RNA sequence: GGGAACGACUCGAGUAGAGUCGAAAAACGCUCAGCCGAGAAUCAUACGGACAACGCCGGGUCCACCGACCCGAACCCAGCACCCACCAAGGGUCGCAGACCCCGCCUACCCCGUCGCGGCCGUCCGUCGGCAUUUACUCUUCGGAGUAAAUGCCGAAAAAGAAACAACAACAACAAC
Reactivity to DMS in 0.01 (KOAc 150mM, MgCl2 10mM, bicine 150mM(pH8.5), 24C), signal-to-noise 2, nucleotides 027 to 126: a040c120g000c070u000c030a090g000c020c000g030a150g000a060a080u010c040a070u020a080c030g010g010a000c040a060a080c070g000c020c100g000g000g050u010c010c010a060c300c090g000a030c010c020c000g000a060a130c020c010c020a050g040c030a080c000c000c000a100c110c090a120a040g000g010g010u000c010g000c110a100g000a060c020c000c000c060g020c030c010u000a120c090c060c010c000g000u000c100g050c020g010g000c020c060g000u000c000c050g000
Reactivity to 2A3 in 0.01 (KOAc 150mM, MgCl2 10mM, bicine 150mM(pH8.5), 24C), signal-to-noise 2, nucleotides 027 to 126: a000c060g010c030u020c010a030g010c010c010g060a030g070a080a130u140c110a050u060a170c080g020g050a050c030a180a050c070g040c040c020g000g010g000u000c050c000a030c000c090g020a020c000c000c000g030a040a050c000c000c020a010g050c030a080c030c010c000a040c010c010a060a030g020g010g000u030c020g000c040a000g030a120c020c010c000c030g000c000c020u070a080c000c010c020c000g010u020c020g030c040g010g040c000c000g030u050c020c010g040